[RMDB]
RNA sequence: GGGAACGACUCGAGUAGAGUCGAAAAUUUUUUCAGCAAUUCGGUCAAUAAGAGCAAAUGAACAAUAGCACUGCAACAGUUCAUUAAUUCACAGUGCUGAUAGGAAGCAGAUCAGAUCAGUGGAACAAUACGUGGACCGAUUCGUCGGUCCACGUAUAAAAGAAACAACAACAACAAC
Reactivity to DMS in 0.01 (KOAc 150mM, MgCl2 10mM, bicine 150mM(pH8.5), 24C), signal-to-noise 1, nucleotides 027 to 126: u000u080u060u030u000u000c000a120g000c020a030a200u020u000c180g000g080u000c070a000a080u040a020a070g000a000g030c000a040a010a060u020g000a020a100c000a000a180u010a210g010c000a000c090u090g010c040a050a110c240a220g000u020u030c040a050u020u000a000a040u000u000c090a100c190a160g000u000g020c000u000g080a040u000a010g000g000a040a000g000c100a070g070a130u000c170a030g000a120u000c090a020g000u140g000g000a000a060c300a130
Reactivity to 2A3 in 0.01 (KOAc 150mM, MgCl2 10mM, bicine 150mM(pH8.5), 24C), signal-to-noise 1, nucleotides 027 to 126: u090u090u000u000u000u020c050a020g000c000a220a100u130u130c140g060g000u070c140a080a040u190a180a130g000a000g160c060a140a000a000u080g000a000a020c000a020a020u060a060g120c140a140c080u200g000c000a010a000c030a080g000u000u000c000a120u050u000a030a030u120u270c020a000c040a000g030u000g050c000u020g060a050u000a000g170g030a060a060g110c080a060g190a280u140c060a010g080a050u060c000a100g060u010g000g050a050a050c100a140
Source information:
The data come from the RNA Mapping Database (RMDB), library OK1LIB. Structure probing data (DMS and 2A3) for a 177-nucleotide construct. The reactions ran in a buffer of 150 mM KOAc, 10 mM MgCl2 and 150 mM bicine (pH 8.5), at 24 C. In probing experiments dimethyl sulfate is read out at A N1 and C N3, which are open when not base-paired. Values cover nucleotides 27 to 126.